[RMDB]
RNA sequence: GGGAACGACUCGAGUAGAGUCGAAAACUUAAUUGAACUUGUACAUGAAUAAAAGUCUUUAGUGGGCCACUUUUGGUAAGCAGAACUGGCGAUGUGGGAUGAACCAAACGCAGAGUUAAGGUGCCGGCAUAAGCCGGAGCUUCGGCUCCGGCUUAUGAAAAGAAACAACAACAACAAC
Reactivity to 2A3 in 0.01 (KOAc 150mM, MgCl2 10mM, bicine 150mM(pH8.5), 24C), signal-to-noise 1, nucleotides 027 to 126: c000u000u030a040a070u120u090g090a030a000c000u000u000g000u120a040c000a160u130g210a150a030u300a090a080a030a000g000u010c020u020u030u000a000g010u000g090g040g090c000c210a200c100u030u100u020u140g120g000u030a070a070g000c080a030g000a300a000c000u090g030g000c000g010a010u000g100u120g010g130g020a070u150g090a000a190c000c120a150a000a000c060g020c000a000g010a000g130u070u070a060a000g000g000u000g060c040c060g000g050
Reactivity to DMS in 0.01 (KOAc 150mM, MgCl2 10mM, bicine 150mM(pH8.5), 24C), signal-to-noise 1, nucleotides 027 to 126: c040u000u030a020a110u000u010g000a060a150c130u000u000g010u010a100c070a110u000g000a150a100u040a000a060a090a230g030u020c060u000u020u000a100g050u040g050g020g000c090c020a080c030u010u000u030u020g010g000u020a050a080g030c010a140g000a000a090c040u000g120g020c150g010a050u090g000u020g000g030g000a060u070g020a170a170c040c050a020a040a030c040g030c030a070g010a050g000u020u000a020a050g000g000u000g060c050c000g030g070